[RMDB]
RNA sequence: GGGAACGACUCGAGUAGAGUCGAAAAGAUAUGGAUCUCCAAGGCACAACAGCGUCACAUCGGAAACGAUGUCGACGACAUGUGCCUGGAGAUCCUAAGUCAAAAGGUGUGCGUUCGCGCACACCAACACAUGCGGGGAGUUCGCUCCCCGCAUGUGAAAAGAAACAACAACAACAAC
Reactivity to 2A3 in 0.01 (KOAc 150mM, MgCl2 10mM, bicine 150mM(pH8.5), 24C), signal-to-noise 1, nucleotides 027 to 126: g020a000u020a010u110g000g010a010u000c020u000c100c000a200a300g020g000c020a020c020a300a300c100a300g000c000g030u010c000a000c000a030u000c000g010g000a000a000a060c000g020a040u010g000u060c070g040a020c010g020a000c000a080u210g000u000g000c000c000u040g010g000a000g020a010u000c000c010u000a000a000g000u000c000a010a010a060a220g000g000u020g000u020g050c050g000u020u100c300g000c000g000c250a000c000a000c030c000a000a010
Reactivity to DMS in 0.01 (KOAc 150mM, MgCl2 10mM, bicine 150mM(pH8.5), 24C), signal-to-noise 1, nucleotides 027 to 126: g020a010u010a150u020g000g060a020u000c000u000c000c010a070a120g000g010c020a030c000a220a060c300a300g010c000g030u000c000a060c030a030u000c000g020g000a100a050a080c000g010a000u000g010u000c190g050a000c000g000a000c100a190u000g010u000g000c000c000u010g000g000a010g030a000u000c000c000u000a030a020g020u000c030a110a080a170a250g000g000u000g040u000g000c000g000u000u000c210g000c000g000c000a000c000a020c000c010a030a090